The record gives the reactivity of an RNA of 207 nucleotides to 2A3 and DMS. It was measured as part of the RMDB library OK3TST.
RNA sequence: GGGAACGACUCGAGUAGAGUCGAAAAUCUAGGAUUUUAGCCUUACAUUCCAGCCUGUAAUCUGGAAAUAAACCACUCCUGCACUGCGGGACUGAAAUGGCAGCCUGGAGUGAUAGCUGAAGGUUUGGCUUCUGGCAUUGGGCUACCUUGGCUCAUAAGCCCUUUUAUAGUUCGCUAUAAAAGGGCUAAAAGAAACAACAACAACAAC
Reactivity to 2A3 in 0.01 (KOAc 150mM, MgCl2 10mM, bicine 150mM(pH8.5), 24C), signal-to-noise 2, nucleotides 027 to 156: u080c070u080a030g030g100a100u080u060u060u140a010g010c000c000u010u060a020c030a030u010u020c000c040a010g020c010c060u130g080u160a050a050u050c050u040g000g100a050a040a060u220a030a090a020c000c010a010c030u000c000c010u010g000c070a120c160u150g020c040g000g050g050a090c050u040g050a110a070a060u140g090g000c010a000g000c020c010u010g000g000a010g010u030g090a100u060a030g000c020u010g090a020a040g020g040u140u150u140g030g030c000u030u000c010u080g080g000c030a030u050u090g000g000g000c010u010a010c010c020u030u030g030g000c010u000c020a040u280a300
Reactivity to DMS in 0.01 (KOAc 150mM, MgCl2 10mM, bicine 150mM(pH8.5), 24C), signal-to-noise 1, nucleotides 027 to 156: u010c050u010a090g000g000a140u000u000u010u010a050g010c000c010u010u010a100c060a110u000u010c000c000a020g020c070c010u000g010u000a030a070u000c010u010g010g000a060a110a120u000a000a110a130c080c030a080c040u000c020c010u000g010c140a080c110u010g000c010g040g000g030a220c030u030g000a050a100a130u000g000g010c000a070g020c060c050u000g060g000a060g030u000g020a120u000a030g010c030u000g000a060a080g010g020u000u000u010g020g020c040u000u000c050u000g000g030c060a210u000u000g000g020g010c000u010a040c090c080u000u000g010g010c000u000c030a040u010a090